[RMDB]
RNA sequence: GGGAACGACUCGAGUAGAGUCGAAAAAUCAGGUUCGCCUGAUACUAUGAUAUGGAGUCCACUACCCACCCAUCUGAACUACAACGUUUCAUCGGAAACGAUGAAAUGUUGCAGAUGGAGGUGGACUCCUAAGUCUGGGGCAGCUGUUCGCAGCUAACGAAACAGGGCUAUUCGUAGCCCUGUUUCGAAAAGAAACAACAACAACAAC
Reactivity to 2A3 in 0.01 (KOAc 150mM, MgCl2 10mM, bicine 150mM(pH8.5), 24C), signal-to-noise 2, nucleotides 027 to 156: a010u030c030a030g020g050u040u080c130g080c030c010u010g000a010u070a100c080u100a070u200g000a010u020a010u070g000g000a000g000u010c000c000a020c010u050a080c060c060c040a030c000c000c010a000u020c000u010g010a010a050c070u180a050c300a000a000c010g000u020u000u000c000a010u000c000g000g020a010a000a020c000g000a000u010g000a000a000a010u010g000u000u010g000c000a010g000a010u000g010g000a000g000g000u010g010g000a000c000u000c000c000u000a010a000g030u010c010u030g020g030g030g020c060a030g030c020u020g040u110u060c170g000c030a010g060c120u210a130a060